[RMDB]
RNA sequence: GGGAACGACUCGAGUAGAGUCGAAAAUAAGUCUAGUUCGCUAGACUUACUAUCGGGAAAACAGCCUCCCGGCUCGAUCAGGCGCAUUCCGUCCAAGCGCUGCAACACACGUAUUCGUACGUGUGAAGCAUGCAGCUUUGUUCGCAAAGCUGCAUGCAAAAGAAACAACAACAACAAC
Reactivity to DMS in 0.01 (KOAc 150mM, MgCl2 10mM, bicine 150mM(pH8.5), 24C), signal-to-noise 2, nucleotides 027 to 126: u000a000a020g010u000c000u000a000g010u000u020c210g040c000u020a010g000a010c010u000u000a030c060u010a120u000c040g010g000g000a070a050a120a150c100a080g010c020c020u000c000c000c010g010g000c080u000c040g000a080u020c230a130g010g000c030g010c100a110u010u010c040c010g000u020c030c100a090a040g000c090g000c010u000g010c100a080a190c000a010c000a000c000g020u000a020u000u010c150g030u020a020c000g020u010g000u000g010a030a120
Reactivity to 2A3 in 0.01 (KOAc 150mM, MgCl2 10mM, bicine 150mM(pH8.5), 24C), signal-to-noise 2, nucleotides 027 to 126: u020a000a000g000u000c000u000a010g000u040u060c220g050c080u000a000g010a010c000u010u000a000c010u030a050u140c040g000g000g000a040a110a040a130c030a030g040c000c000u020c000c000c020g010g030c030u020c020g060a070u120c100a110g000g050c030g000c050a040u170u110c020c010g030u030c060c040a050a000g010c030g000c120u050g050c040a070a110c000a010c000a000c000g010u000a020u030u100c170g030u020a000c000g000u010g010u000g000a020a020